Notes
Structure probing data (2A3 and DMS) for a 207-nucleotide construct. For 2A3, 4,655 sequencing reads were counted. DMS adducts were read by reverse transcription with MarathonRT.
RNA sequence: GGGAACGACUCGAGUAGAGUCGAAAAUAGUAGUGGGAGUUCAGUGGUGUAUACUGAGUUCAGUGGAAGUUCAUUUAGUACUGGGUAUACUAAAUGCAUACCAGAUAUUCUCUAACACAACUUCAGGUAGAAAACCAAACAAAACCUACUUUUUACACUCCUAAUAGGGAUUCGUCCCUAUUAGGAGAAAAGAAACAACAACAACAAC
Reactivity to 2A3 in 0.01 (KOAc 150mM, MgCl2 10mM, bicine 150mM(pH8.5), 24C), signal-to-noise 5, nucleotides 027 to 156: u140a000g030u000a000g010u150g020g030g010a080g030u090u060c140a060g060u100g070g020u020g030u020a040u010a050c010u010g020a010g030u030u080c150a020g000u020g030g040a150a070g010u050u040c010a000u010u010u010a000g000u010a030c070u170g210g030g040u220a050u000a060c000u010a010a010a010u010g000c030a040u090a130c010c020a010g040a040u090a100u200u130c080u000c000u050a100a020c010a000c000a040a060c010u180u160c060a030g100g000u040a020g060a060a150a020a010c020c020a040a030a020c040a010a300a010a010c010c000u010a020c000u100u060u010u010u040a040c060a010
Reactivity to DMS in 0.01 (KOAc 150mM, MgCl2 10mM, bicine 150mM(pH8.5), 24C), signal-to-noise 2, nucleotides 027 to 156: u010a110g020u000a100g010u000g040g010g010a220g030u000u000c010a110g000u000g000g050u000g000u000a200u000a030c040u000g000a060g000u000u000c100a150g030u010g020g020a110a140g000u000u000c030a030u000u000u000a020g030u000a020c040u030g040g000g010u010a040u000a030c000u020a000a020a040u030g010c060a110u020a100c020c030a110g000a150u010a120u000u010c010u000c030u000a090a120c060a070c030a020a050c050u000u000c020a080g020g000u000a090g000a110a040a120a080c040c030a050a060a030c070a080a020a130a110c060c030u000a050c010u060u000u000u000u000a130c140a150
Conditions: 150 mM KOAc, 10 mM MgCl2 and 150 mM bicine (pH 8.5), 24 C. For 2A3 the reverse transcriptase was SuperScript II with manganese.